Structure probing data (DMS and 2A3) for a 207-nucleotide construct. Reactivities are given for positions 27 through 156. Source: RMDB library OK3TST, as collected in RNAgym. In probing experiments dimethyl sulfate is read out at A N1 and C N3, which are open when not base-paired. For DMS, 2,783 sequencing reads were counted. The RNA was probed in 150 mM KOAc, 10 mM MgCl2 and 150 mM bicine (pH 8.5) at 24 C. DMS adducts were read by reverse transcription with MarathonRT. For 2A3, 4,130 sequencing reads were counted. High 2A3 reactivity points to a flexible backbone, as in loops and unpaired stretches.

[RMDB]
RNA sequence: GGGAACGACUCGAGUAGAGUCGAAAAGUACGACAACUUAUUACGCAUCUUCGUACGAUCGAUGCUAAGAUUAGUGGCGAAAGCCACAAGCACGGGCAUUCAUACGUCAGAUCCGAGAGGAUUUGACGUCCUAGCCUGUGCAAGACUAGGUCAGACACCCUAAUACCCAUUUCGAUGGGUAUUAGGGAAAAGAAACAACAACAACAAC
Reactivity to DMS in 0.01 (KOAc 150mM, MgCl2 10mM, bicine 150mM(pH8.5), 24C), signal-to-noise 2, nucleotides 027 to 156: g030u000a040c010g010a090c110a130a110c050u010u000a100u020u000a120c290g060c100a090u000c090u000u000c020g020u000a110c040g000a190u010c010g040a040u000g000c020u000a010a050g010a170u000u000a120g010u000g020g040c010g000a150a060a280g010c000c010a000c020a050a030g030c000a030c010g000g000g010c000a120u000u030c080a080u000a040c000g050u000c000a000g010a000u000c000c000g020a300g010a300g050g010a040u000u000u000g020a000c000g000u000c050c060u000a110g030c000c000u000g010u000g000c060a030a030g020a080c020u010a020g010g010u000c010a260g020a180c160a140
Reactivity to 2A3 in 0.01 (KOAc 150mM, MgCl2 10mM, bicine 150mM(pH8.5), 24C), signal-to-noise 4, nucleotides 027 to 156: g060u040a030c030g030a010c060a090a060c090u140u190a060u170u100a130c080g010c010a020u010c030u090u030c030g140u150a100c120g030a030u110c080g020a010u010g010c010u030a020a050g020a150u100u230a030g000u000g000g000c020g020a070a010a020g000c000c000a000c010a020a000g010c000a000c010g050g000g000c020a060u030u150c040a030u180a120c010g000u000c000a000g000a010u000c000c000g050a040g000a030g050g000a000u010u000u000g000a000c000g000u000c000c000u060a030g000c000c000u000g000u000g010c000a000a000g020a020c040u070a030g000g100u040c020a010g020a040c010a040